This 177-nucleotide RNA was probed chemically with DMS and 2A3. 2A3 adducts were read by reverse transcription with SuperScript II with manganese. DMS adducts were read by reverse transcription with MarathonRT.
RNA sequence: GGGAACGACUCGAGUAGAGUCGAAAAAAAGGUAACGGAGGCGCGCGAAGGUCCGCUCGGGACGGUCGGCAACCGUCCUUUUGAGUGCAAGAGCGUAAGCGGGCUUGACUGCGAGGCCCACGAGCCGUUCUUUUAGUAUGUUCGCAUACUAAAAGAAAAAAGAAACAACAACAACAAC
Reactivity to DMS in 0.01 (KOAc 150mM, MgCl2 10mM, bicine 150mM(pH8.5), 24C), signal-to-noise 9, nucleotides 027 to 126: a050a060a070g010g010u010a060a080c040g000g000a270g010g010c010g000c010g020c010g010a150a030g010g000u000c010c010g010c010u000c150g010g000g000a010c000g000g010u010c110g030g010c250a110a150c010c000g000u000c000c000u000u010u010u010g010a130g020u020g000c080a140a100g000a150g010c060g010u020a080a040g020c010g010g010g000c010u000u000g000a120c120u040g020c010g010a050g010g000c010c010c070a120c040g000a300g000c010c010g000
Reactivity to 2A3 in 0.01 (KOAc 150mM, MgCl2 10mM, bicine 150mM(pH8.5), 24C), signal-to-noise 9, nucleotides 027 to 126: a000a000a000g100g010u130a170a020c020g030g010a040g010g000c010g000c000g000c010g030a030a010g020g010u000c000c000g010c010u020c010g000g000g010a000c010g010g030u100c070g150g030c040a030a020c000c000g000u020c010c000u040u040u050u070g030a020g010u120g020c040a170a100g030a050g180c030g060u100a050a000g010c010g000g000g000c000u040u030g080a100c050u090g000c000g010a030g120g000c000c000c010a020c010g000a010g000c000c000g000